[RMDB]
RNA sequence: GGGAACGACUCGAGUAGAGUCGAAAAGCACCUGGGUUCGCCCAGGUGCAAAGAUCAGUAGCAUGCAAGAUCUAAUCCGAUAGGAUGCUACAGGGAAACCAAAAAGCCAGUGCUUCGGCACUGGCAACUUAAAUCCAGGGUUCGCCCUGGAUUUAAGAAAAGAAACAACAACAACAAC
Reactivity to 2A3 in 0.01 (KOAc 150mM, MgCl2 10mM, bicine 150mM(pH8.5), 24C), signal-to-noise 1, nucleotides 027 to 126: g000c000a000c000c000u000g050g020g000u050u120c210g100c020c000c000a000g020g000u020g000c000a010a000a000g010a010u070c040a030g020u000a000g010c010a000u140g050c070a110a090g040a210u000c010u120a090a100u050c050c010g020a040u070a080g130g030a020u000g000c000u000a000c000a010g070g000g060a050a050a000c040c000a130a060a020a050a000g000c000c000a000g020u000g000c030u020u180c250g080g000c000a000c000u000g000g000c010a000a000
Reactivity to DMS in 0.01 (KOAc 150mM, MgCl2 10mM, bicine 150mM(pH8.5), 24C), signal-to-noise 1, nucleotides 027 to 126: g010c000a010c000c000u020g010g010g030u000u020c210g010c010c010c000a000g010g010u000g000c000a000a020a100g010a080u000c040a090g030u010a040g010c000a000u000g000c010a160a110g010a040u000c030u000a060a050u000c060c120g010a090u010a170g000g010a040u000g000c010u000a010c000a150g000g000g010a050a130a210c030c040a020a070a030a150a050g040c000c000a040g010u000g000c000u000u010c290g000g000c020a010c000u000g000g000c000a000a010